[RMDB]
RNA sequence: GGGAACGACUCGAGUAGAGUCGAAAAUGUGCCUAAAUUCUACCCCUAGCACACAACCACAGUAAAGCAAAUCGAGCAUGGCCAUUCUUCAAAACCAUUAAGGCCAUGAAAACCAGGGCAUUGCACAAGCUAUUUUUAUUUUCGAAUAAAAAUAGCUAAAAGAAACAACAACAACAAC
Reactivity to 2A3 in 0.01 (KOAc 150mM, MgCl2 10mM, bicine 150mM(pH8.5), 24C), signal-to-noise 2, nucleotides 027 to 126: u050g000u040g030c010c050u110a120a190a130u280u110c060u090a190c010c020c010c020u030a040g000c010a000c000a000c000a040a030c020c020a020c000a080g080u160a030a000a050g080c050a000a000a110u120c090g030a000g040c010a000u000g000g000c000c010a100u100u000c060u120u070c030a040a010a070a170c070c020a020u120u130a100a020g000g000c000c000a000u000g000a000a000a000a000c020c010a020g050g040g000c020a030u030u140g000c030a050c000a090
Reactivity to DMS in 0.01 (KOAc 150mM, MgCl2 10mM, bicine 150mM(pH8.5), 24C), signal-to-noise 4, nucleotides 027 to 126: u010g000u000g020c020c040u000a040a090a120u000u000c120u010a230c050c000c010c110u000a080g000c020a030c020a050c070a070a090c050c040a040c130a070g010u010a030a060a090g010c050a020a060a060u000c090g000a100g020c010a030u000g010g010c000c000a110u000u000c080u010u000c120a060a060a100a150c140c120a070u010u010a080a090g020g010c000c000a020u000g000a020a040a060a060c120c050a030g010g010g020c040a040u000u000g010c060a060c180a090
The record gives the reactivity of an RNA of 177 nucleotides to 2A3 and DMS. High DMS reactivity at an A or C suggests that its Watson-Crick edge is free. 2A3 adducts were read by reverse transcription with SuperScript II with manganese. The DMS profile rests on 3,246 reads. For 2A3, 1,712 sequencing reads were counted. For DMS the reverse transcriptase was MarathonRT. Values cover nucleotides 27 to 126.